RNA sequence: GGGAACGACUCGAGUAGAGUCGAAAAUGUCACACAGUAGCGAGGGAUGCAAUUAAUUGCAUCUACACCAAGCUCAAGGCUUGGAUUUCCACUAGUGUCGAGUCGUUCCCACUCGCUACGCCCACAACUCAAACUUCGUGUUCGCACGAAGUUUGAGAAAAGAAACAACAACAACAAC
Reactivity to 2A3 in 0.01 (KOAc 150mM, MgCl2 10mM, bicine 150mM(pH8.5), 24C), signal-to-noise 1, nucleotides 027 to 126: u140g040u080c000a030c030a060c050a110g000u000a010g050c030g030a020g000g050g000a000u010g000c020a010a010u140u250a130a270u160u000g000c010a000u000c000u020a010c030a070c000c000a000a000g030c010u050c190a140a070g140g030c000u020u030g010g020a030u010u000u070c050c070a010c050u070a070g160u140g180u220c030g000a090g010u040c000g000u010u000c010c000c010a000c000u000c000g000c000u020a020c000g000c010c040c000a120c020a040a090